Structure probing data (2A3 and DMS) for a 207-nucleotide construct.
Source: RMDB library OK3TST, as collected in RNAgym.
Conditions: 150 mM KOAc, 10 mM MgCl2 and 150 mM bicine (pH 8.5), 24 C.
DMS adducts were read by reverse transcription with MarathonRT.
For 2A3, 1,615 sequencing reads were counted.
[RMDB]
RNA sequence: GGGAACGACUCGAGUAGAGUCGAAAAGAAGUUUCUACUUCAAUAGAGAGUGAGGAACACAUGAAAUCAAGGCAUCUCUGAAAGGCAGGAUGCUGAGCGGUCAAAGCUGAGUCAGGAGUGGAUGCUGCAUCAGCAACCAGCCCAGGCAUGUAGGAGAUAUUACUCCACCUUUCGAGGUGGAGUAAUAAAAAGAAACAACAACAACAAC
Reactivity to 2A3 in 0.01 (KOAc 150mM, MgCl2 10mM, bicine 150mM(pH8.5), 24C), signal-to-noise 3, nucleotides 027 to 156: g050a090a010g000u040u080u100c040u090a010c000u040u060c010a110a070u160a030g110a020g010a000g020u070g050a050g000g040a070a000c050a000c000a090u070g110a060a070a060u080c090a050a000g080g000c010a020u000c060u000c020u080g010a110a080a070g030g020c020a010g000g040a010u010g000c010u000g000a000g000c020g060g020u060c080a110a030a040g020c010u040g070a030g160u130c090a040g010g090a040g080u040g010g040a030u130g020c010u020g000c010a240u000c020a040g020c010a020a060c000c000a000g040c000c000c010a030g030g040c030a010u060g010u030a030g010g070a050g030a020
Reactivity to DMS in 0.01 (KOAc 150mM, MgCl2 10mM, bicine 150mM(pH8.5), 24C), signal-to-noise 2, nucleotides 027 to 156: g010a070a050g010u000u010u020c080u000a110c010u020u000c020a120a180u030a180g010a130g000a080g010u000g000a070g020g000a000a030c020a110c060a110u000g000a060a080a100u010c070a050a100g000g000c050a070u000c000u000c030u010g000a120a090a090g010g020c040a130g030g020a120u000g020c000u010g000a060g000c010g040g020u000c070a000a150a270g010c080u000g000a100g000u000c120a090g000g000a040g030u000g000g000a260u000g000c000u010g000c040a100u000c040a000g050c010a010a080c020c000a120g000c040c010c000a160g000g010c130a080u000g030u000a150g000g000a060g000a150